[RMDB]
RNA sequence: GGGAACGACUCGAGUAGAGUCGAAAAGAUAUGGAGUCCUGAGCUUUGUUGUAUGAGCGAUAAGCUGCACUCGGAAACGAGUGACAGCUUUUGACGCUCGAAGACAAAGCUCAGGACUCCUAAGUCACAAUUUCAUAACCUUCGGGUUAUGAAAUUGAAAAGAAACAACAACAACAAC
Reactivity to DMS in 0.01 (KOAc 150mM, MgCl2 10mM, bicine 150mM(pH8.5), 24C), signal-to-noise 2, nucleotides 027 to 126: g000a080u000a300u010g010g000a020g040u000c000c000u000g010a030g010c020u010u000u000g020u000u010g000u010a250u030g000a020g010c000g050a200u000a010a010g020c000u010g000c000a000c000u000c010g010g000a190a110a250c010g000a010g030u000g000a100c000a010g010c000u000u010u000u010g030a170c020g010c000u000c000g000a130a300g000a010c000a020a000a010g000c010u000c000a010g010g000a000c000u000c000c000u000a000a040g010u000c020a220